[RMDB]
RNA sequence: GGGAACGACUCGAGUAGAGUCGAAAAGAUAUGGAUUAAGGAGGGAGCUCCCGUAGAGAUAAAAGUUCUAUCGGAAACGAUAGAACUUUUAUCUCUACGAAGAGCGAGGAUCUCCUAAUCCUAAGUCCUAUAUUUAAAUGUUCGCAUUUAAAUAUAGAAAAGAAACAACAACAACAAC
Reactivity to DMS in 0.01 (KOAc 150mM, MgCl2 10mM, bicine 150mM(pH8.5), 24C), signal-to-noise 1, nucleotides 027 to 126: g000a190u010a240u000g000g010a030u000u000a060a090g030g000a030g000g010g000a110g010c000u000c000c160c000g010u000a000g010a050g000a000u000a000a010a000a010g000u000u010c000u010a010u000c000g000g000a170a110a230c000g030a000u010a000g000a000a000c010u010u000u010u000a010u000c000u000c000u000a000c020g020a050a120g000a000g030c000g010a070g010g010a010u000c000u000c000c000u000a000a000u000c000c010u000a110a140g000u010c030

Conditions: 150 mM KOAc, 10 mM MgCl2 and 150 mM bicine (pH 8.5), 24 C. Structure probing data (DMS) for a 177-nucleotide construct. Values cover nucleotides 27 to 126.